Notes
This 177-nucleotide RNA was probed chemically with 2A3 and DMS. Reactivities are given for positions 27 through 126. 2A3 adducts were read by reverse transcription with SuperScript II with manganese. It was measured as part of the RMDB libraries RFM100 and RFMREP. For DMS the reverse transcriptase was MarathonRT. The RNA was probed in 150 mM KOAc, 10 mM MgCl2 and 150 mM bicine (pH 8.5) at 24 C.
RNA sequence: GGGAACGACUCGAGUAGAGUCGAAAAUAAUAUCGAAUCACGGCACAAUAGCGCUCGUCUGCGUUCUGUCAGGGCCUGUUUUGGUAAUGCCUUUCUUUCUGUUAUGCGCUACGCUGAUCGUCUGAGUGCUAACGCAAAAUUUCGAUUUUGCGUUAGCAAAAGAAACAACAACAACAAC
Reactivity to 2A3 in 0.01 (KOAc 150mM, MgCl2 10mM, bicine 150mM(pH8.5), 24C), signal-to-noise 4, nucleotides 027 to 126: u130a040a020u080a060u080c050g050a030a010u080c020a030c120g010g000c050a040c010a060a120u060a120g020c010g020c020u020c050g120u030c060u130g020c020g010u080u070c030u060g070u060c040a080g000g050g000c000c000u050g060u020u070u070u040g040g000u070a110a020u080g040c010c000u020u040u030c030u010u070u010c030u060g040u080u090a050u160g030c050g000c000u030a030c050g000c020u040g010a080u040c020g030u000c030u000g030a030g030u020
Reactivity to DMS in 0.01 (KOAc 150mM, MgCl2 10mM, bicine 150mM(pH8.5), 24C), signal-to-noise 1, nucleotides 027 to 126: u010a080a080u030a060u030c030g000a070a030u000c060a050c090g010g060c060a040c030a110a080u000a010g050c100g000c010u000c300g040u000c130u000g020c050g010u000u010c030u000g010u000c040a100g000g000g000c020c060u010g000u000u000u000u000g010g030u000a060a050u000g010c110c040u000u010u000c030u000u000u000c000u000g010u000u000a030u000g030c090g020c050u010a030c050g020c020u000g010a040u020c080g000u020c020u020g010a120g020u010